Annotation:
An RNA of 177 nucleotides, treated with DMS and 2A3 and read out base by base. The RNA was probed in 150 mM KOAc, 10 mM MgCl2 and 150 mM bicine (pH 8.5) at 24 C. The 2A3 profile rests on 1,392 reads. For DMS the reverse transcriptase was MarathonRT.

RNA sequence: GGGAACGACUCGAGUAGAGUCGAAAACGGGUUGGCCUUGAUCCACACCGCCUCGUCGAACGGAUCAUCAUCGACGUCGAUCGUGUAGAUGUAGCCGAAAUACGAGUCGUCGGUCCGCUCGCCGCGCCGUCGGCAACGUGUUCGCACGUUGCCGACGAAAAGAAACAACAACAACAAC
Reactivity to DMS in 0.01 (KOAc 150mM, MgCl2 10mM, bicine 150mM(pH8.5), 24C), signal-to-noise 1, nucleotides 027 to 126: c050g020g010g000u010u000g010g000c030c080u010u020g020a050u000c030c040a050c060a110c010c060g090c100c000u010c070g000u000c040g000a050a120c090g010g020a010u000c060a130u020c130a080u000c050g020a000c000g000u000c040g030a140u010c040g010u030g020u000a070g010a140u010g020u010a130g000c040c020g000a020a170a130u000a060c010g000a090g000u000c000g020u000c030g000g010u000c000c000g050c060u000c060g020c050c030g000c140g000c070
Reactivity to 2A3 in 0.01 (KOAc 150mM, MgCl2 10mM, bicine 150mM(pH8.5), 24C), signal-to-noise 1, nucleotides 027 to 126: c030g010g020g050u050u060g040g000c070c070u050u100g050a110u070c000c020a010c000a010c060c000g050c000c040u080c130g010u030c000g020a050a060c050g000g040a080u060c000a030u050c000a000u100c020g000a010c020g210u050c040g080a130u030c010g000u050g060u200a080g030a210u020g050u080a040g040c040c010g070a120a040a070u200a020c030g000a000g010u010c000g050u010c000g010g000u060c000c040g000c010u060c030g000c000c010g000c060g050c110